[RMDB]
RNA sequence: GGGAACGACUCGAGUAGAGUCGAAAAAGUCACCUAUUACGAUAGGUGACAUUUGAACCAGCGAACAAUUCAGUUGCGAGAUUCGAGGUUUCAAUCUGAAUCAUAGUAGCCAUUACGAUGGCUACAACUCACUCCCGACUGUUCGCAGUCGGGAGAACCCUUUAGAAUACUUCGGUAUUCUAAAGGGAAAAGAAACAACAACAACAAC
Reactivity to DMS in 0.01 (KOAc 150mM, MgCl2 10mM, bicine 150mM(pH8.5), 24C), signal-to-noise 1, nucleotides 027 to 156: a080g000u000c010a030c000c010u000a000u020u000a080c300g000a080u000a050g060g050u040g040a000c010a010u000u010u010g030a190a300c030c010a110g030c100g020a100a140c130a130a130u000u000c040a090g000u000u000g050c050g020a090g000a060u000u000c070g040a200g040g000u000u040u010c070a100a140u000c060u000g020a040a070u000c040a100u000a220g000u000a020g010c010c000a040u000u000a080c200g000a060u000g040g010c030u000a040c000a060a020c120u020c130a110c010u000c000c000c020g000a010c000u030g020u000u000c280g010c020a040g010u000c020g090g020g000a000g010a010a000
Reactivity to 2A3 in 0.01 (KOAc 150mM, MgCl2 10mM, bicine 150mM(pH8.5), 24C), signal-to-noise 3, nucleotides 027 to 156: a000g000u000c000a000c000c000u000a010u060u070a080c230g040a020u000a000g000g000u020g000a000c000a000u050u060u050g030a030a010c010c010a030g170c020g050a010a020c040a090a110u090u050c030a020g040u120u030g050c040g000a020g010a070u040u070c030g090a080g060g070u170u180u180c050a040a030u090c030u040g000a000a000u080c050a090u100a190g000u000a000g010c000c000a000u040u040a050c180g090a020u000g000g000c000u010a000c000a010a000c050u090c030a080c030u010c000c000c010g010a000c010u020g050u040u070c170g010c130a000g000u000c000g000g000g000a000g000a000a000